[RMDB]
Source: RMDB library OK2TST, as collected in RNAgym. Structure probing data (DMS and 2A3) for a 177-nucleotide construct. The DMS profile rests on 3,040 reads.
RNA sequence: GGGAACGACUCGAGUAGAGUCGAAAAACACGUAGGCGGUAACGGUAGGGACGGAUUUUCCGCUAUGUUACUUAAAUCUUAUUUCGGUGAGACACAGGGAUUGAUUACUAAAGAGUUACCCGUAUCCCGGCAAAUUACAAUUCGUUGUAAUUUGCCGAAAAGAAACAACAACAACAAC
Reactivity to DMS in 0.01 (KOAc 150mM, MgCl2 10mM, bicine 150mM(pH8.5), 24C), signal-to-noise 4, nucleotides 027 to 126: a060c110a090c100g010u000a040g020g010c090g000g000u000a050a060c070g020g010u000a100g000g000g000a100c080g010g000a100u010u000u000u000c020c030g010c030u020a050u000g010u000u000a020c080u000u010a050a070a070u010c060u000u010a100u000u000u000c060g010g030u000g000a120g000a060c120a080c100a100g000g020g010a080u010u010g020a090u010u000a090c070u000a090a080a120g000a100g010u000u000a110c040c030c020g000u000a090u000c070c060
Reactivity to 2A3 in 0.01 (KOAc 150mM, MgCl2 10mM, bicine 150mM(pH8.5), 24C), signal-to-noise 3, nucleotides 027 to 126: a030c050a010c060g040u080a060g040g110c050g030g060u030a070a020c040g030g070u080a070g050g030g090a040c040g020g040a060u070u000u120u100c030c010g000c020u020a050u080g040u040u020a040c000u050u080a030a070a050u110c030u060u120a120u070u110u070c040g060g000u030g050a060g030a050c070a030c030a090g050g020g000a040u040u060g040a020u060u070a060c050u050a060a120a100g090a020g000u000u020a060c030c020c010g010u060a080u070c000c000

Record summary
The reactions ran in a buffer of 150 mM KOAc, 10 mM MgCl2 and 150 mM bicine (pH 8.5), at 24 C. The 2A3 profile rests on 1,931 reads.